Source information
Chemical mapping of a 177-nucleotide RNA with 2A3 and DMS. 2A3 adducts were read by reverse transcription with SuperScript II with manganese. The reactions ran in a buffer of 150 mM KOAc, 10 mM MgCl2 and 150 mM bicine (pH 8.5), at 24 C. Values cover nucleotides 27 to 126. It was measured as part of the RMDB libraries RFM100 and RFMREP.
[RMDB]
RNA sequence: GGGAACGACUCGAGUAGAGUCGAAAAGACUACAACUCAAGCCGUCGGAUACGCCGUGCAGGAUUCGGCGGACGGUGACGCGCUGCGUCAAAGAUCGGUGAUUGGCGGCUCGAAGCCUUUUACCCUGAUCCCUUCGUUUUUUCGAAAACGAAGGGAUAAAAGAAACAACAACAACAAC
Reactivity to 2A3 in 0.01 (KOAc 150mM, MgCl2 10mM, bicine 150mM(pH8.5), 24C), signal-to-noise 9, nucleotides 027 to 126: g020a020c040u100a070c130a200a040c040u020c060a030a010g000c000c000g000u010c010g030g040a050u120a180c020g010c020c020g030u050g060c080a100g040g120a070u040u030c010g010g000c010g050g010a020c020g030g030u090g030a050c020g030c000g020c080u140g000c000g020u010c000a050a080a050g130a070u090c040g010g020u030g020a050u020u040g010g000c010g010g010c010u020c030g050a050a010g000c000c000u020u020u020u050a080c010c000c000u030g030
Reactivity to DMS in 0.01 (KOAc 150mM, MgCl2 10mM, bicine 150mM(pH8.5), 24C), signal-to-noise 4, nucleotides 027 to 126: g010a060c010u020a130c120a080a140c210u020c030a090a040g020c000c000g020u000c010g000g000a080u010a130c030g000c010c020g010u020g000c300a080g000g000a070u000u010c010g010g010c000g000g010a020c030g020g010u040g010a110c050g000c040g020c060u000g000c030g000u000c010a030a080a120g000a090u010c040g000g010u010g010a110u000u020g000g000c000g000g000c020u010c060g010a100a100g010c050c010u010u010u000u010a140c020c010c030u000g000